[RMDB]
RNA sequence: GGGAACGACUCGAGUAGAGUCGAAAACUGGUAUUACAGACAUGAGCCACCGCACCUGGCCUCCAUUGCCUUUAUUUCUUUCUGCUGAUAAGUUCUGAUGCCAGUGAUACCCAGAUUGUGCCAUAGGAAAGAGGGGGCUGGGCUCUUCCAGAAACCAGCCUAGUACUACGUUCGCGUAGUACUAGGCAAAAGAAACAACAACAACAAC
Reactivity to 2A3 in 0.01 (KOAc 150mM, MgCl2 10mM, bicine 150mM(pH8.5), 24C), signal-to-noise 2, nucleotides 027 to 156: c010u000g000g030u020a020u120u140a140c030a040g010a010c050a040u100g020a000g060c030c020a060c010c090g050c040a100c020c040u030g020g000c020c040u010c030c020a090u060u090g090c060c010u150u200u120a190u070u210u080c070u030u110u030c060u070g100c020u030g070a120u050a230a080g080u120u010c000u010g010a030u020g010c030c000a000g010u020g030a030u110a150c000c000c010a000g070a150u080u100g000u070g060c000c010a100u120a060g020g050a050a050a040g060a120g000g010g000g000g020c040u010g010g000g000c000u030c000u080u040c030c020a040g120a040a030a030c180c210a020